The data come from the RNA Mapping Database (RMDB), library TTRDEL.
An RNA of 177 nucleotides, treated with 2A3 and DMS and read out base by base.
2A3 adducts were read by reverse transcription with SuperScript II with manganese.
The RNA was probed in 150 mM KOAc, 10 mM MgCl2 and 150 mM bicine (pH 8.5) at 24 C.

[RMDB]
RNA sequence: GGGAACGACUCGAGUAGAGUCGAAAAGAUAUGGAACUUUACAGACCCUAUCGCGUUGAAAUCGGAAACGAUGGAGCGAUAUGUGCUCUGUAUAGUUCCUAAGUCAAAAGUGCGCUUCGGCGCACAACACAUAGGUAGUGUUCGCACUACCUAUGUGAAAAGAAACAACAACAACAAC
Reactivity to 2A3 in 0.01 (KOAc 150mM, MgCl2 10mM, bicine 150mM(pH8.5), 24C), signal-to-noise 6, nucleotides 027 to 126: g020a010u060a040u160g000g000a000a010c000u030u020u000a000c000a000g010a010c010c010c000u000a000u000c000g000c010g270u300u070g040a020a030a010u010c010g000g030a100a040a030c010g000a010u020g000g030a030g000c000g000a000u000a020u070g030u050g020c090u000c000u000g000u010a010u020a000g000u010u000c000c000u000a060a010g030u000c010a000a020a080a180g000u000g000c010g000c000u040u140c300g140g000c000g010c010a000c000a010a000
Reactivity to DMS in 0.01 (KOAc 150mM, MgCl2 10mM, bicine 150mM(pH8.5), 24C), signal-to-noise 7, nucleotides 027 to 126: g010a030u000a300u000g000g000a000a010c000u000u000u000a010c000a020g010a020c020c070c040u000a010u000c000g020c010g020u000u010g000a060a120a020u000c000g010g000a130a100a220c010g000a010u000g000g000a100g010c000g010a010u000a000u000g000u010g010c170u000c000u010g000u000a010u000a010g010u000u000c000c000u000a010a060g000u010c040a080a070a110a100g010u000g000c010g010c000u000u010c180g020g000c000g010c000a000c000a030a120